The data come from the RNA Mapping Database (RMDB), library M2PK90. Chemical mapping of a 177-nucleotide RNA with 2A3 and DMS. For DMS, 1,386 sequencing reads were counted. For 2A3, 1,163 sequencing reads were counted. DMS adducts were read by reverse transcription with MarathonRT. Values cover nucleotides 27 to 126.
RNA sequence: GGGAACGACUCGAGUAGAGUCGAAAACAAUUGAGCGUCGCACACACACAGACUAAGUCUGACACUGACAGAGCCUAAACCGCUCUGUCAGUGUGGGAGAUAUCGUUCUUAAUGUGAGCAGAGGAAAUGCUUAUGGUCGAUUCGUCGACCAUAAGCAAAAAGAAACAACAACAACAAC
Reactivity to 2A3 in 0.01 (KOAc 150mM, MgCl2 10mM, bicine 150mM(pH8.5), 24C), signal-to-noise 1, nucleotides 027 to 126: c000a030a190u130u200g030a050g100c050g080u020c050g010c030a040c020a000c000a000c000a000c030a100g000a020c000u070a060a050g030u000c020u050g080a010c000a000c010u000g000a000c020a000g000a000g000c000c010u000a000a000a000c020c010g020c010u010c010u010g000u000c000a000g010u000g000u000g010g050g000a030g020a000u050a020u130c090g070u170u080c000u010u140a140a080u050g000u020g010a040g000c070a070g030a030g040g150a040a030a030
Reactivity to DMS in 0.01 (KOAc 150mM, MgCl2 10mM, bicine 150mM(pH8.5), 24C), signal-to-noise 2, nucleotides 027 to 126: c040a100a140u010u000g000a070g010c010g010u010c080g000c050a070c040a060c020a050c030a150c150a110g000a010c090u010a100a170g020u000c010u000g000a040c000a000c000u000g000a010c000a000g000a010g040c000c030u000a060a100a170c300c300g000c000u000c000u000g020u000c000a000g010u000g000u000g030g010g000a000g010a050u000a080u000c090g010u000u000c000u000u000a190a120u000g030u000g000a030g020c020a100g000a080g020g000a030a050a030